Source information: Structure probing data (DMS and 2A3) for a 207-nucleotide construct. As a SHAPE reagent, 2A3 marks flexible, mostly unpaired nucleotides at the ribose 2'-OH. Conditions: 150 mM KOAc, 10 mM MgCl2 and 150 mM bicine (pH 8.5), 24 C. The data come from the RNA Mapping Database (RMDB), library M2RFPK. For 2A3 the reverse transcriptase was SuperScript II with manganese. Reactivities are given for positions 27 through 156.

RNA sequence: GGGAACGACUCGAGUAGAGUCGAAAAAUCAAUGUAGGGAAUAACAUUGAAUUGAUACAAAUACCUUUUUCGGUGUAGGGAAAAACACCGAAUUGAUACAAAUACCUUUCUCAAUGUAGGGAAUAACAAAACAGGCAUCGCUUCGGCGAUGCCUGAAUCAUAUUGUUACCUUCGGGUAACAAUAUGAAAAAGAAACAACAACAACAAC
Reactivity to DMS in 0.01 (KOAc 150mM, MgCl2 10mM, bicine 150mM(pH8.5), 24C), signal-to-noise 1, nucleotides 027 to 156: a080u000c040a040a100u010g010u000a070g010g010g030a110a140u010a120a040c010a030u000u000g000a040a070u000u000g010a050u000a060c010a020a160a040u010a040c000c020u000u000u000u010u010c000g050g020u000g010u000a080g010g020g000a110a050a080a050a040c000a020c010c010g010a000a020u000u000g000a020u010a000c010a050a140a040u010a020c010c010u000u000u000c110u000c000a030a000u000g010u000a150g000g020g000a080a060u000a020a090c110a050a030a050a100c010a020g000g000c000a020u000c000g030c000u000u000c300g060g030c020g050a020u010g020c010c000u000g000a000a040
Reactivity to 2A3 in 0.01 (KOAc 150mM, MgCl2 10mM, bicine 150mM(pH8.5), 24C), signal-to-noise 4, nucleotides 027 to 156: a000u010c000a000a000u010g020u030a100g060g100g120a100a200u120a140a010c010a000u010u010g040a080a050u050u080g070a110u130a190c060a050a120a050u170a130c010c010u040u010u000u000u000c000g000g000u000g000u020a020g010g000g060a060a130a060a050a000c000a000c000c000g000a000a000u010u010g000a000u010a030c020a000a120a010u060a060c010c030u040u100u060c070u020c060a080a150u170g020u090a080g010g010g040a050a080u100a150a040c080a050a080a020a030c000a000g000g000c000a000u000c010g000c040u060u090c200g020g000c010g000a000u000g000c000c000u000g000a000a000